RNA sequence: GGGAACGACUCGAGUAGAGUCGAAAAUCCGGGACAUCAAUUGGCGGUCGAGGAAGAGUUAUCUUUUCUUGUUAACAUUGUCUUGGGGUCCUCCGAAUCAGGUCAACUGGAGACGAGGAUUCAUCGCACAAUGGAAGAGCACAGUCCUUUGGAUUGGGCCAUCCAUCAUGUUCGCAUGAUGGAUGGCAAAAGAAACAACAACAACAAC
Reactivity to 2A3 in 0.01 (KOAc 150mM, MgCl2 10mM, bicine 150mM(pH8.5), 24C), signal-to-noise 2, nucleotides 027 to 156: u000c000c000g000g000g010a020c030a070u210c090a210a300u100u110g080g020c000g010g060u020c020g020a010g020g010a000a020g020a000g050u290u300a190u170c000u070u070u120u040c020u000u020g020u030u110a060a050c000a010u010u000g000u020c020u080u300g010g000g000g060u000c000c000u030c000c050g000a020a010u000c000a000g010g170u140c120a160a120c180u010g010g000a080g000a070c010g000a000g000g020a000u000u000c000a020u100c010g010c000a010c000a020a000u010g010g000a030a030g050a030g070c020a000c000a110g000u000c000c000u050u130u170g010g020a000u000u020g020g000

An RNA of 207 nucleotides, treated with 2A3 and read out base by base. The data come from the RNA Mapping Database (RMDB), library PDB130. Conditions: 150 mM KOAc, 10 mM MgCl2 and 150 mM bicine (pH 8.5), 24 C. 2A3 adducts were read by reverse transcription with SuperScript II with manganese.